An RNA of 177 nucleotides, treated with DMS and 2A3 and read out base by base. Source: RMDB library OK1LIB, as collected in RNAgym. Values are in units of 0.01, from 0 to 300, in steps of 10.
RNA sequence: GGGAACGACUCGAGUAGAGUCGAAAACGCAAGCUGCUGCUGGCCCAGAGGAACCUGCAGUCCAUCCGGCUCAUCGCCGAGCUGCUCAGCAGAGCCAAGGUACCCGGGGGCUCCCUCUGCAGCCGCCCACGGUCAUGGUAUUCGUACCAUGACCGUGAAAAGAAACAACAACAACAAC
Reactivity to DMS in 0.01 (KOAc 150mM, MgCl2 10mM, bicine 150mM(pH8.5), 24C), signal-to-noise 3, nucleotides 027 to 126: c100g000c100a080a170g000c020u010g010c040u030g000c010u030g000g010c010c090c010a080g010a080g000g000a160a040c060c020u010g010c090a140g010u000c020c030a050u050c130c060g020g000c030u010c120a120u020c230g010c030c050g000a100g010c060u010g030c000u000c010a080g010c040a130g020a070g030c010c060a120a050g000g000u010a040c060c050c060g010g020g000g010g000c030u010c070c010c010u000c040u040g000c100a060g010c040c060g000c010c070
Reactivity to 2A3 in 0.01 (KOAc 150mM, MgCl2 10mM, bicine 150mM(pH8.5), 24C), signal-to-noise 6, nucleotides 027 to 126: c080g030c070a030a060g000c010u090g000c000u010g010c000u050g070g030c020c040c010a030g050a060g030g010a070a110c030c040u090g010c060a010g030u030c030c010a160u090c050c030g020g000c040u060c100a200u170c170g000c020c000g010a020g010c080u110g010c000u020c080a130g040c040a030g030a010g030c030c010a060a040g040g000u080a080c020c000c000g040g000g000g020g000c010u030c010c010c000u020c030u030g010c010a000g000c000c020g030c010c000

In probing experiments dimethyl sulfate is read out at A N1 and C N3, which are open when not base-paired.